[RMDB]
RNA sequence: GGGAACGACUCGAGUAGAGUCGAAAAGAAGUGAUAAUACUUUUAACGUGUAGGAAGGCGUGAAGGUAACAUUGAAGAUUCAGUGUGAACUGGAUUGAAGUUGCCUUUAGUGCAGAUCUUGAUGGUACCUAAUUAGUCAGUUCGCUGACUAAUUAGGAAAAGAAACAACAACAACAAC
Reactivity to DMS in 0.01 (KOAc 150mM, MgCl2 10mM, bicine 150mM(pH8.5), 24C), signal-to-noise 9, nucleotides 027 to 126: g010a050a030g010u000g010a120u030a120a100u030a050c020u000u000u010u010a070a130c070g010u010g010u010a040g000g010a060a090g000g010c040g010u000g000a010a010g000g010u000a000a000c000a100u020u030g010a160a220g000a010u000u000c000a000g000u000g010u050g000a130a020c000u000g010g000a000u000u000g000a080a080g000u000u000g000c010c010u000u000u000a030g010u020g020c030a040g000a060u010c030u000u000g000a070u010g010g010u020a150
Reactivity to 2A3 in 0.01 (KOAc 150mM, MgCl2 10mM, bicine 150mM(pH8.5), 24C), signal-to-noise 9, nucleotides 027 to 126: g060a030a000g040u050g120a100u150a300a060u140a110c020u020u040u020u100a110a040c060g030u060g060u110a040g060g070a090a020g070g000c010g010u040g010a000a000g010g000u010a010a000c020a090u100u190g080a080a020g010a030u000u010c000a000g010u010g040u060g130a060a030c000u000g000g010a010u010u050g030a050a020g000u000u000g000c000c000u000u000u010a070g010u050g010c010a010g010a160u020c020u040u080g060a070u080g060g020u030a050